[RMDB]
RNA sequence: GGGAACGACUCGAGUAGAGUCGAAAAGAAGCGUAAUCGCAAGUUAGGGAUUGUGGUGAAUAUCAACCUGACAGAGCGAUCGGCAAUCAAGAAGCUUCCGGCGAACAUGAAGCGACGCCUAUAGAAAGGGAAUAAUUAUCUUCGGAUAAUUAUUCCCAAAAGAAACAACAACAACAAC
Reactivity to DMS in 0.01 (KOAc 150mM, MgCl2 10mM, bicine 150mM(pH8.5), 24C), signal-to-noise 3, nucleotides 027 to 126: g000a040a060g000c000g040u030a170a010u020c000g040c000a140a150g000u000u000a010g000g020g000a160u020u040g010u030g010g030u020g010a130a080u030a070u010c040a070a050c000c000u000g010a020c010a040g000a300g000c010g000a020u000c070g000g000c040a090a070u010c090a060a080g010a210a190g020c000u000u000c000c210g010g010c040g000a040a070c090a060u000g010a050a050g000c040g010a020c060g000c010c000u000a080u030a100g020a100a120a120
Reactivity to 2A3 in 0.01 (KOAc 150mM, MgCl2 10mM, bicine 150mM(pH8.5), 24C), signal-to-noise 6, nucleotides 027 to 126: g030a050a010g060c010g030u170a070a040u000c030g000c030a070a030g010u010u010a010g040g070g080a190u060u060g080u050g170g040u230g150a160a050u160a040u230c010a000a050c000c000u000g010a000c000a010g120a000g050c000g000a000u030c020g080g000c040a000a090u080c050a090a120g100a080a020g040c010u040u000c010c000g090g020c020g010a080a070c030a090u160g050a090a020g040c040g010a010c040g000c010c020u090a100u040a130g190a070a060a060